The record gives the reactivity of an RNA of 207 nucleotides to DMS and 2A3. Values are in units of 0.01, from 0 to 300, in steps of 10. Conditions: 150 mM KOAc, 10 mM MgCl2 and 150 mM bicine (pH 8.5), 24 C. For 2A3, 1,045 sequencing reads were counted. 2A3 adducts were read by reverse transcription with SuperScript II with manganese. Values cover nucleotides 27 to 156.
RNA sequence: GGGAACGACUCGAGUAGAGUCGAAAAUGUCGUUUGAAACAACCGAACUACCAUACUUUGAAAGUGUCGGUUAUAGUACUGAUCUUGAAAGUAAUAACGACCCUGAAAAAUGGUCGGUACCUGAUAGAUUGCCUACAAACGAAGGUGAUAAGAGGCAAAUAUAGGGAGCAUUCGUGCUCCCUAUAUUAAAAGAAACAACAACAACAAC
Reactivity to DMS in 0.01 (KOAc 150mM, MgCl2 10mM, bicine 150mM(pH8.5), 24C), signal-to-noise 3, nucleotides 027 to 156: u010g030u010c010g010u000u000u010g010a170a160a160c040a050a090c040c000g020a080a100c050u000a130c030c020a110u010a040c110u010u000u000g010a130a120a060g010u010g020u000c000g040g010u000u000a090u000a090g030u000a030c060u000g010a020u000c020u000u010g000a110a040a060g020u010a070a090u010a100a120c010g010a040c010c000c110u020g000a050a050a120a150a100u010g000g010u000c010g020g010u000a010c020c030u010g000a230u010a030g030a050u000u000g000c080c000u000a300c020a020a030a060c050g000a080a060g020g030u000g000a100u010a060a080g010a140g000g040c020a070
Reactivity to 2A3 in 0.01 (KOAc 150mM, MgCl2 10mM, bicine 150mM(pH8.5), 24C), signal-to-noise 3, nucleotides 027 to 156: u150g030u010c010g030u010u010u050g120a110a070a010c040a050a010c030c010g040a030a010c010u070a030c040c050a080u110a120c160u250u150u270g150a280a210a050g090u140g080u040c000g000g010u020u000a040u030a020g000u010a040c000u050g000a010u020c010u000u090g020a050a100a050g030u060a050a130u020a110a050c010g010a030c000c000c010u060g120a070a010a030a040a120u080g000g000u010c010g010g000u010a030c000c000u000g030a010u020a070g060a020u030u110g280c040c000u080a040c020a050a050a010c030g030a040a070g050g040u090g050a070u040a160a030g020a020g090g040c010a000